[RMDB]
RNA sequence: GGGAACGACUCGAGUAGAGUCGAAAAAUUAAUGAAAAUUGGUAAAGAAAAUGGUGCGAUUGCUGGAAAACUUACUGGUGCUGGUCGUGGUGGAAGUAUGUUAUUGCUUGCCAAAGAUUUACCAACACUAACUGUCAGCUUUCGAGCUGACAGUUAGAAAAGAAACAACAACAACAAC
Reactivity to 2A3 in 0.01 (KOAc 150mM, MgCl2 10mM, bicine 150mM(pH8.5), 24C), signal-to-noise 3, nucleotides 027 to 126: a000u110u110a030a060u040g090a020a010a000a040u040u080g020g000u010a090a010a000g090a080a180a020a010u030g040g000u070g020c020g050a090u070u090g020c010u030g040g030a020a060a080a110c020u080u100a060c000u100g080g030u150g020c020u020g000g060u030c030g050u080g050g050u040g020g020a020a000g000u030a040u150g070u000u160a020u020u050g030c030u010u100g020c020c000a050a020a010g110a000u010u010u090a010c000c000a010a030c020a020
Reactivity to DMS in 0.01 (KOAc 150mM, MgCl2 10mM, bicine 150mM(pH8.5), 24C), signal-to-noise 2, nucleotides 027 to 126: a050u040u060a060a100u070g000a060a040a120a180u000u000g000g020u010a020a030a060g020a100a110a070a050u000g000g020u010g010c030g010a040u010u010g020c020u000g010g010a080a030a110a070c040u010u000a070c080u010g000g010u010g000c020u020g010g000u010c060g080u000g010g010u000g000g010a030a070g020u000a010u010g010u000u000a020u020u010g030c020u000u000g030c040c020a060a040a080g010a200u000u000u010a020c000c010a030a030c200a150
Chemical mapping of a 177-nucleotide RNA with 2A3 and DMS. The 2A3 profile rests on 1,566 reads. It was measured as part of the RMDB library OK1LIB. For DMS, 3,723 sequencing reads were counted. DMS adducts were read by reverse transcription with MarathonRT. As a SHAPE reagent, 2A3 marks flexible, mostly unpaired nucleotides at the ribose 2'-OH. The RNA was probed in 150 mM KOAc, 10 mM MgCl2 and 150 mM bicine (pH 8.5) at 24 C.